[RMDB]
RNA sequence: GGGAACGACUCGAGUAGAGUCGAAAAGAUAUGGACUCACGAUGAAAUGGAACUACGAAUUAUAUUCGGAAACGAAUAUGAUUCGCCAUGGAGUGAGUCCUAAGUCAAAGGUUACUUCGGUAACCAACAUGGUCAAAAAGUUCGCUUUUUGACCAUGAAAAGAAACAACAACAACAAC
Reactivity to DMS in 0.01 (KOAc 150mM, MgCl2 10mM, bicine 150mM(pH8.5), 24C), signal-to-noise 3, nucleotides 027 to 126: g010a060u000a300u010g000g010a060c020u000c000a020c000g040a170u030g000a180a150a010u000g000g000a150a060c120u020a300c020g010a010a000u000u000a010u000a010u000u000c000g010g000a140a100a190c000g000a010a010u000a000u010g010a000u000u010c020g000c000c000a010u000g000g020a080g000u000g010a000g010u000c000c010u000a010a050g000u000c030a110a150a200g010g020u010u000a010c020u010u000c220g060g000u000a010a000c000c010a040a170
Reactivity to 2A3 in 0.01 (KOAc 150mM, MgCl2 10mM, bicine 150mM(pH8.5), 24C), signal-to-noise 2, nucleotides 027 to 126: g050a020u080a080u130g010g000a000c010u010c010a000c020g300a300u080g080a060a070a010u020g020g040a120a100c190u260a090c300g000a000a000u000u010a000u010a000u010u000c030g030g040a030a060a080c000g000a010a010u010a010u010g010a010u010u000c000g000c000c010a000u010g040g000a040g000u030g010a010g000u020c000c000u000a030a000g010u000c010a010a070a100g000g010u010u010a010c010u040u090c300g140g010u000a000a000c020c010a010a010
This 177-nucleotide RNA was probed chemically with DMS and 2A3.
High DMS reactivity at an A or C suggests that its Watson-Crick edge is free.
For DMS, 2,129 sequencing reads were counted.
Source: RMDB library TTRDES, as collected in RNAgym.
2A3 adducts were read by reverse transcription with SuperScript II with manganese.
Conditions: 150 mM KOAc, 10 mM MgCl2 and 150 mM bicine (pH 8.5), 24 C.
The 2A3 profile rests on 3,536 reads.